[RMDB]
Conditions: 150 mM KOAc, 10 mM MgCl2 and 150 mM bicine (pH 8.5), 24 C. The record gives the reactivity of an RNA of 177 nucleotides to DMS. For DMS the reverse transcriptase was MarathonRT.
RNA sequence: GGGAACGACUCGAGUAGAGUCGAAAACAGGUCGGACCGCGAGGAGGUGGAGAUACCAUGCCGACCCGAAGAAGGAAAGGAGGACACGGACGACAAACCGUAGGUACUCUUGCCCUUUAUUGUUGGGGUUUACGCAUCAGUUCGCUGAUGCGUAAACAAAAGAAACAACAACAACAAC
Reactivity to DMS in 0.01 (KOAc 150mM, MgCl2 10mM, bicine 150mM(pH8.5), 24C), signal-to-noise 1, nucleotides 027 to 126: c040a120g000g000u000c030g020g010a210c010c120g000c300g000a110g000g000a110g000g040u000g010g030a190g040a190u000a190c030c020a100u000g000c030c010g000a040c060c000c020g000a100a080g010a020a010g010g000a090a260a000g000g000a030g000g010a150c070a020c000g010g000a070c050g000a100c300a050a050a010c000c000g020u000a030g020g020u010a150c000u000c000u000u000g000c300c050c000u010u030u000a060u000u000g000u000u020g000g000g000